An RNA of 177 nucleotides, treated with 2A3 and DMS and read out base by base. Reactivities are rounded to 0.1 and cut off at 0 and 3. The reactions ran in a buffer of 150 mM KOAc, 10 mM MgCl2 and 150 mM bicine (pH 8.5), at 24 C.
[RMDB]
RNA sequence: GGGAACGACUCGAGUAGAGUCGAAAACCGCAGGACAAGGUAGCUGAGGUUCGGCGGCUGCAGGACCAGGGCCGGGUGGUCGCGAUGGUGGGUGACGGCGUCAACGACGCGCCCGCCUUGGUACAAGGCCGCACGUCAGAUUCGUCUGACGUGCGGCAAAAGAAACAACAACAACAAC
Reactivity to 2A3 in 0.01 (KOAc 150mM, MgCl2 10mM, bicine 150mM(pH8.5), 24C), signal-to-noise 2, nucleotides 027 to 126: c020c000g000c050a050g070g050a050c020a100a120g090g070u070a000g090c050u030g010a020g000g090u050u090c020g050g010c020g030g000c030u060g020c060a030g030g110a010c020c000a000g000g000g030c210c010g030g000g020u030g020g020u010c020g000c000g050a050u060g020g300u020g030g000g060u140g000a050c020g030g070c000g000u020c020a190a130c030g020a010c020g000c000g000c280c010c000g000c020c000u000u020g010g020u020a060c000a050a010g080
Reactivity to DMS in 0.01 (KOAc 150mM, MgCl2 10mM, bicine 150mM(pH8.5), 24C), signal-to-noise 2, nucleotides 027 to 126: c010c000g020c110a070g000g000a060c050a120a060g010g010u010a090g000c070u000g010a080g010g010u000u000c080g000g020c020g000g000c030u000g010c070a180g000g000a070c010c010a030g000g010g000c050c070g020g000g030u000g000g000u000c020g020c110g000a060u000g030g010u000g010g010g030u000g050a170c060g020g000c000g020u000c030a060a110c050g000a040c020g010c040g040c000c010c000g000c010c020u000u000g000g000u000a020c130a130a150g010
Source information:
It was measured as part of the RMDB library OK2TRN. For 2A3, 1,887 sequencing reads were counted.